[RMDB]
RNA sequence: GGGAACGACUCGAGUAGAGUCGAAAAACAUAUUGUUCAACGCAGUUCCAAGCAUCGCCAUUUCGUUGCGCCCGCUGAUGUUUGCGCGUUGGGUAAAAUCGCGAUGACUGACGGCACUCGCCAUUGAGAGUAGUGCAGUAUUCGUACUGCACUACUCAAAAGAAACAACAACAACAAC
Reactivity to 2A3 in 0.01 (KOAc 150mM, MgCl2 10mM, bicine 150mM(pH8.5), 24C), signal-to-noise 4, nucleotides 027 to 126: a000c060a010u210a040u200u210g040u050u050c030a030a010c030g030c050a050g020u100u060c020c000a030a000g000c010a010u010c020g000c010c030a050u070u110u090c140g100u080u150g080c030g040c040c050c010g080c060u100g080a100u110g090u020u120u090g030c020g000c000g000u060u110g030g010g010u080a020a030a010a060u060c030g000c020g040a020u050g150a210c020u050g030a040c050g000g000c010a020c040u030c050g000c010c030a070u090u140g060a070
Reactivity to DMS in 0.01 (KOAc 150mM, MgCl2 10mM, bicine 150mM(pH8.5), 24C), signal-to-noise 3, nucleotides 027 to 126: a050c100a090u010a100u010u000g020u000u010c040a080a060c100g010c070a100g020u000u000c090c010a110a060g000c020a030u000c000g010c030c090a070u010u000u000c090g000u000u000g010c090g020c030c040c060g030c090u010g020a070u000g020u010u010u000g010c160g010c020g010u000u020g000g000g000u020a040a040a050a040u010c300g010c020g000a040u010g000a100c070u000g010a100c110g010g020c080a070c060u010c070g000c020c100a100u000u000g010a250
An RNA of 177 nucleotides, treated with 2A3 and DMS and read out base by base. For DMS, 2,875 sequencing reads were counted. The 2A3 profile rests on 3,612 reads. The reactions ran in a buffer of 150 mM KOAc, 10 mM MgCl2 and 150 mM bicine (pH 8.5), at 24 C.